[RMDB]
RNA sequence: GGGAACGACUCGAGUAGAGUCGAAAAAGCCACCGCUACGGCGGUGGCAAGUAGAAAAGUUGGUGCUUAGACCACGCCCUCUACCGUAAUAAUAGAUAAAUAGGCGAGUAUCAGUACACUGAUACAAAAAACACUCACACGUUCGCGUGUGAGUGAAGAAAUAUGAGUUCUUCGGAACUCAUAUUUCAAAAGAAACAACAACAACAAC
Reactivity to 2A3 in 0.01 (KOAc 150mM, MgCl2 10mM, bicine 150mM(pH8.5), 24C), signal-to-noise 3, nucleotides 027 to 156: a010g020c000c000a000c000c010g010c000u020a040c250g130g010c000g000g000u000g000g010c000a000a000g000u010a000g010a000a040a010a010g000u070u040g040g000u060g060c150u190u110a030g050a080c000c010a010c000g000c000c000c000u000c000u030a010c010c020g070u020a050a050u070a170a060u100a170g120a070u160a080a100a020u100a060g030g000c030g030a030g020u000a000u000c010a000g030u110a070c190a080c100u010g000a000u030a010c010a010a300a000a000a000a000c010a000c000u000c000a010c000a000c010g020u100u080c210g020c010g120u000g000u000g000a000g000u000g000a000a020
Reactivity to DMS in 0.01 (KOAc 150mM, MgCl2 10mM, bicine 150mM(pH8.5), 24C), signal-to-noise 1, nucleotides 027 to 156: a140g110c010c010a010c020c000g090c000u010a100c210g010g070c000g030g080u010g010g040c000a000a000g020u010a150g000a100a160a140a080g020u010u000g010g010u000g030c050u000u000a160g050a070c030c010a210c010g010c000c000c040u000c040u000a030c020c030g000u000a110a080u010a210a180u000a100g040a130u000a000a040a060u000a040g020g000c000g020a170g010u000a030u000c010a010g030u010a190c220a090c030u000g030a000u010a020c050a000a020a020a070a070a070c030a010c000u010c010a000c010a000c000g010u000u000c300g070c060g070u000g010u010g000a000g000u000g000a010a040